[RMDB]
RNA sequence: GGGAACGACUCGAGUAGAGUCGAAAAAGUCAGAGGGCGCUACCAUGCAUACUAGGGCUGGCUACUCUUGCACAGAAUCACAUCUCGAUAAUUGUCAGUGCAAGAAGGACAAUUAUACCAUUUAAUGAAAACGUUUACCUGUUCGCAGGUAAACGAAUCAUGCAUAGUAGUUCGCUACUAUGCAUGAAAAAGAAACAACAACAACAAC
Reactivity to 2A3 in 0.01 (KOAc 150mM, MgCl2 10mM, bicine 150mM(pH8.5), 24C), signal-to-noise 7, nucleotides 027 to 156: a010g030u020c020a010g000a040g040g040g030c060g000c040u060a140c060c040a060u130g000c030a050u120a190c040u100a080g000g080g020c020u010g020g000c010u060a070c000u010c000u020u010g000c010a000c000a020g150a050a060u170c040a040c020a210u060c070u090c130g070a030u030a040a010u020u020g000u010c020a020g010u000g030c010a000a010g020a020a020g030g000a000c000a010a010u020u020a020u030a080c040c060a110u150u170u180a190a130u170g090a050a050a020a020c000g000u000u000u000a000c000c000u010g020u030u060c170g000c060a000g000g000u000a010a000a000c000g000a000a010
Reactivity to DMS in 0.01 (KOAc 150mM, MgCl2 10mM, bicine 150mM(pH8.5), 24C), signal-to-noise 3, nucleotides 027 to 156: a100g010u010c020a030g000a140g010g020g000c050g000c010u010a050c070c030a040u000g020c040a150u030a140c110u010a070g000g010g020c030u010g010g010c030u000a140c030u000c000u000u000g010c020a060c020a110g010a070a130u000c100a050c050a090u000c040u000c090g010a110u000a010a050u000u000g010u000c020a300g030u010g010c020a040a060g000a070a140g010g000a070c020a010a050u000u000a030u000a110c070c050a170u000u010u000a070a120u000g020a090a080a070a170c010g000u000u000u000a000c000c000u000g010u000u000c290g040c030a000g010g020u000a000a000a010c010g020a030a060